Overview: Structure probing data (2A3 and DMS) for a 207-nucleotide construct. For 2A3 the reverse transcriptase was SuperScript II with manganese. The DMS profile rests on 4,442 reads. Reactivities are rounded to 0.1 and cut off at 0 and 3. In probing experiments dimethyl sulfate is read out at A N1 and C N3, which are open when not base-paired.
[RMDB]
RNA sequence: GGGAACGACUCGAGUAGAGUCGAAAACGGAAGCAUUAAAACCAUUCGAGCUAGUCAAUGCGUGGCGUGUCUCUCCGCAGCGUGUUGGCGAAUGAAAAGAGUGACUAAGCAUGUAGUACCGAGGAUGAUAAGAGCAAUUCGUUCGCGAAUUGCUCAACAUCUUAGCACUCUUCGGAGUGCUAAGAUGAAAAGAAACAACAACAACAAC
Reactivity to 2A3 in 0.01 (KOAc 150mM, MgCl2 10mM, bicine 150mM(pH8.5), 24C), signal-to-noise 5, nucleotides 027 to 156: c050g060g030a050a010g020c040a040u100u130a070a050a010a050c070c010a030u050u060c060g020a020g060c030u060a020g020u010c000a000a000u010g010c000g010u020g110g010c020g000u050g040u050c010u000c010u010c090c000g000c010a010g000c000g000u020g050u010u000g010g000c010g020a010a020u080g050a010a020a030a010g030a010g010u040g020a020c020u040a040a030g020c030a040u070g020u110a050g020u030a080c020c070g020a040g070g000a030u100g020a020u110a240a130g010a000g000c000a000a000u000u000c000g020u040u070c150g000c010g110a000a000u000u000g000c000u010c000a000a000
Reactivity to DMS in 0.01 (KOAc 150mM, MgCl2 10mM, bicine 150mM(pH8.5), 24C), signal-to-noise 2, nucleotides 027 to 156: c070g020g000a170a080g010c030a080u010u000a080a100a110a080c050c010a090u010u000c030g020a110g020c020u010a160g020u010c010a020a020u000g020c000g040u030g000g010c030g010u010g030u000c090u010c040u010c260c000g000c020a060g020c020g030u000g000u000u010g010g010c000g010a100a050u000g000a090a100a060a110g010a090g010u000g010a100c050u000a060a130g060c090a050u010g030u010a060g000u010a080c030c010g020a050g020g000a090u020g000a100u000a090a150g010a020g000c010a040a020u000u000c010g050u000u010c300g000c020g030a010a010u010u000g010c010u000c000a010a100